[RMDB]
An RNA of 177 nucleotides, treated with 2A3 and DMS and read out base by base.

RNA sequence: GGGAACGACUCGAGUAGAGUCGAAAAUUUGCCAUUUUCACGAUCGAUUUAGACAAAUUUAAAGAGAUUAACGAUCUGCAGGGCCAUCUGAUUGGUGACCAGCUGCUGCAGCGCGUGGCGGGCGCCGGAUUAUGGGAGUGUUCGCACUCCCAUAAUCAAAAGAAACAACAACAACAAC
Reactivity to 2A3 in 0.01 (KOAc 150mM, MgCl2 10mM, bicine 150mM(pH8.5), 24C), signal-to-noise 9, nucleotides 027 to 126: u080u050u120g040c010c010a090u110u060u050u120c080a060c070g050a040u040c030g080a080u040u050u100a090g070a080c100a080a120a090u090u150u160a120a120a020g110a010g030a050u080u060a110a040c020g030a060u030c030u030g010c020a030g000g020g010c030c010a030u020c030u120g180a270u170u270g030g020u020g020a060c050c030a030g040c020u160g010c000u020g010c030a020g010c030g000c010g040u040g010g010c050g030g030g000c030g000c000c010g070
Reactivity to DMS in 0.01 (KOAc 150mM, MgCl2 10mM, bicine 150mM(pH8.5), 24C), signal-to-noise 5, nucleotides 027 to 126: u010u030u020g010c030c010a100u020u010u010u030c060a100c140g000a040u010c020g000a160u010u010u000a050g030a080c210a050a100a090u060u010u020a040a030a050g010a220g010a040u010u010a120a130c060g000a050u030c010u020g000c040a020g020g010g020c020c040a040u010c010u000g030a170u030u020g000g020u010g010a150c080c050a150g020c050u010g020c040u010g000c010a030g020c050g030c090g010u000g010g030c200g010g000g010c030g020c040c070g010
It was measured as part of the RMDB library OK1LIB. The RNA was probed in 150 mM KOAc, 10 mM MgCl2 and 150 mM bicine (pH 8.5) at 24 C. DMS adducts were read by reverse transcription with MarathonRT. 2A3 adducts were read by reverse transcription with SuperScript II with manganese. Values cover nucleotides 27 to 126.